[RMDB]
RNA sequence: GGGAACGACUCGAGUAGAGUCGAAAAGAUAUGGACCUAGCCCGUCGAGGAUCGAUGGGAGAACUCGGAAACGAGACCCAUCGGGAGACGUGCUAGGUCCUAAGUCAAACGUCGGUUCGCCGACGAACGUAAGCCUUCUGUUCGCAGAAGGCUUACGAAAAGAAACAACAACAACAAC
Reactivity to DMS in 0.01 (KOAc 150mM, MgCl2 10mM, bicine 150mM(pH8.5), 24C), signal-to-noise 2, nucleotides 027 to 126: g000a030u000a300u000g000g000a010c000c000u000a000g000c000c030c000g000u000c000g050a100g010g030a050u010c000g000a020u010g000g010g000a130g020a090a080c000u010c000g000g000a120a040a140c010g030a010g000a110c010c000c000a020u010c000g000g000g000a050g000a000c000g000u000g010c020u000a010g000g000u000c010c000u000a010a050g000u000c050a040a160a190c030g020u000c010g000g010u000u010c220g020c000c000g000a000c000g000a040a030
Reactivity to 2A3 in 0.01 (KOAc 150mM, MgCl2 10mM, bicine 150mM(pH8.5), 24C), signal-to-noise 1, nucleotides 027 to 126: g020a000u030a040u080g000g000a000c000c000u000a000g010c050c230c000g010u030c020g000a300g060g030a020u000c000g010a000u040g010g040g040a080g110a100a080c070u000c000g000g030a060a030a040c020g000a000g160a190c010c010c000a000u020c010g000g000g000a030g000a000c010g000u010g000c000u000a000g000g000u000c000c010u000a010a000g000u010c000a010a020a050c020g010u000c000g000g070u040u070c140g110c110c020g000a000c000g000a070a010

An RNA of 177 nucleotides, treated with DMS and 2A3 and read out base by base. Conditions: 150 mM KOAc, 10 mM MgCl2 and 150 mM bicine (pH 8.5), 24 C. The DMS profile rests on 1,872 reads. The data come from the RNA Mapping Database (RMDB), library TTRDEL. DMS adducts were read by reverse transcription with MarathonRT.